[RMDB]
RNA sequence: GGGAACGACUCGAGUAGAGUCGAAAAAAGCCUGGGAAGAACAGAGAGGGGUCCUAGGCAUGAGUGUUAGGCAUGAGUACGGUCAAAGCCGCACCGGGCCACCCACCGGGCCAGGGAUAUCCCAUUGCUAACCGUUUAUGUUCGCAUAAACGGUUAGAAAAGAAACAACAACAACAAC
Reactivity to DMS in 0.01 (KOAc 150mM, MgCl2 10mM, bicine 150mM(pH8.5), 24C), signal-to-noise 1, nucleotides 027 to 126: a210a060g040c000c010u000g000g000g000a100a040g020a170a180c140a090g010a080g030a090g010g000g000g000u000c070c020u010a100g010g010c000a020u000g010a040g000u000g000u010u010a180g030g030c040a060u000g000a280g030u010a030c050g010g000u000c070a120a130a160g000c010c020g020c040a040c010c060g000g000g020c000c000a140c160c300c030a020c040c020g010g000g000c000c000a240g010g000g000a080u000a120u040c000c000c030a200u000u010g010